[RMDB]
RNA sequence: GGGAACGACUCGAGUAGAGUCGAAAAUGCAGAGAGCUGCCUCCCACCCCUGCUCCUGCGAAGGAGGAAGCCAAGAGCCCCCAGGCUGCUUGGUCUACACGGGUCACGAGGCUGGUGGAUGGAGCAGCCGGGUACUAAAGUUCGCUUUAGUACCCGGAAAAGAAACAACAACAACAAC
Reactivity to DMS in 0.01 (KOAc 150mM, MgCl2 10mM, bicine 150mM(pH8.5), 24C), signal-to-noise 2, nucleotides 027 to 126: u010g010c090a070g000a240g000a110g010c000u000g010c020c070u010c010c040c080a180c080c000c000c030u000g010c010u000c010c000u000g000c260g000a190a050g000g000a030g010g010a180a080g030c010c010a090a070g020a120g000c030c010c090c050c130a220g010g000c000u010g000c030u010u000g000g000u000c020u010a140c070a110c110g020g020g000u020c050a090c140g010a100g000g020c040u000g010g020u000g000g010a130u000g000g000a050g000c030a070g010
Notes:
Structure probing data (DMS) for a 177-nucleotide construct. Conditions: 150 mM KOAc, 10 mM MgCl2 and 150 mM bicine (pH 8.5), 24 C. It was measured as part of the RMDB library OK2TRN. In probing experiments dimethyl sulfate is read out at A N1 and C N3, which are open when not base-paired. For DMS, 1,486 sequencing reads were counted.